[RMDB]
RNA sequence: GGGAACGACUCGAGUAGAGUCGAAAAUUUCAUUGACCUUUACGCAAUCCUGCGUAAAUGCUGGUAUAGGGUGUACUUCGGAUUUCCGAGCCUAUAUUGGUUUUGAAAGGACCUUUAAGUCCCUACUGUUCAAACGACAAUUCGUUGUCGUUUGAACAAAAGAAACAACAACAACAAC
Reactivity to DMS in 0.01 (KOAc 150mM, MgCl2 10mM, bicine 150mM(pH8.5), 24C), signal-to-noise 2, nucleotides 027 to 126: u000u000u000c030a070u000u040g010a050c230c010u000u010u000a000c000g000c000a050a180u040c220c120u000g030c010g000u010a000a020a010u000g000c000u000g000g010u000a040u000a010g010g000g010u030g000u060a130c260u040u000c010g000g000a300u010u000u070c030c000g000a020g010c030c000u000a050u060a010u020u050g010g010u000u010u000u000g000a010a020a030g000g000a180c190c040u000u000u010a110a170g000u000c010c000c000u040a080c180u010
Reactivity to 2A3 in 0.01 (KOAc 150mM, MgCl2 10mM, bicine 150mM(pH8.5), 24C), signal-to-noise 5, nucleotides 027 to 126: u000u010u010c010a010u010u060g060a070c000c000u000u020u000a010c000g000c000a030a190u170c070c090u120g000c000g000u000a000a010a010u040g010c000u010g000g010u010a000u010a010g070g040g040u090g070u110a160c060u070u060c010g100g120a260u140u060u080c020c010g010a020g050c000c000u000a010u010a000u000u000g010g000u020u020u040u030g030a030a010a010g040g030a050c020c000u040u170u070a060a020g040u020c000c000c010u030a070c060u030